[RMDB]
RNA sequence: GGGAACGACUCGAGUAGAGUCGAAAAAUUUUGAAUUUUUGAAAGACUAAGGCUUUUCUACCUCAGGCAUAGAUUACCUUAUCUGUGUUUGGCAAAACUUUUGGGAAUUUUGGUCCUCAAUGCUCUUCAACUUCGUACUUUAUUUUGGCCUUUUGGACCUAAUAAACAUGUUCGCAUGUUUAUUAGGAAAAGAAACAACAACAACAAC
Reactivity to 2A3 in 0.01 (KOAc 150mM, MgCl2 10mM, bicine 150mM(pH8.5), 24C), signal-to-noise 2, nucleotides 027 to 156: a000u120u110u080u190g050a030a030u110u050u040u110u180g000a040a050a000g000a000c020u120a090a040g020g030c020u270u100u050u070c050u140a090c000c010u010c060a010g010g000c000a000u020a030g000a030u030u170a190c000c070u130u120a030u020c010u010g030u010g030u000u060u040g000g020c010a010a040a090a140c040u160u180u160u120g060g010g040a040a070u010u060u080u280g050g010u150c000c000u040c010a030a060u010g030c000u010c010u040u010c020a020a000c000u090u070c040g050u070a060c030u170u180u070a130u090u180u080u060g030g010c010c020u050u090u030u100g030g010a020